Source information: The record gives the reactivity of an RNA of 207 nucleotides to 2A3. Conditions: 150 mM KOAc, 10 mM MgCl2 and 150 mM bicine (pH 8.5), 24 C. For 2A3 the reverse transcriptase was SuperScript II with manganese.
RNA sequence: GGGAACGACUCGAGUAGAGUCGAAAAGAGAGAACGAGUGUGAGAUCGUUCGUGUACGAGAGUGAACUCGAGAGUACGUACGAGAGUGAACGAACGAACACUCACUCUCGUGUGUUCGUGUGAACGAACGUGAGUACUCGAUCUCGAGUACGUGAACCCCGCUCUCUAAUUUCGAUUAGAGAGCGGGAAAAGAAACAACAACAACAAC
Reactivity to 2A3 in 0.01 (KOAc 150mM, MgCl2 10mM, bicine 150mM(pH8.5), 24C), signal-to-noise 2, nucleotides 027 to 156: g070a010g010a000g020a070a060c010g000a000g010u060g000u020g010a040g030a060u030c000g000u000u020c020g010u040g010u090a060c070g030a010g030a050g270u180g160a080a070c010u000c040g030a020g000a030g090u180a150c170g040u090a050c040g040a040g000a000g130u170g100a030a000c000g000a000a000c000g000a040a010c030a000c040u000c000a020c000u020c000u000c020g040u070g000u050g000u020u000c010g000u010g040u110g040a050a020c020g000a010a000c000g040u030g030a050g040u140a010c000u000c000g110a190u170c070u010c010g000a020g000u060a120c000g000u000g050a020a020c000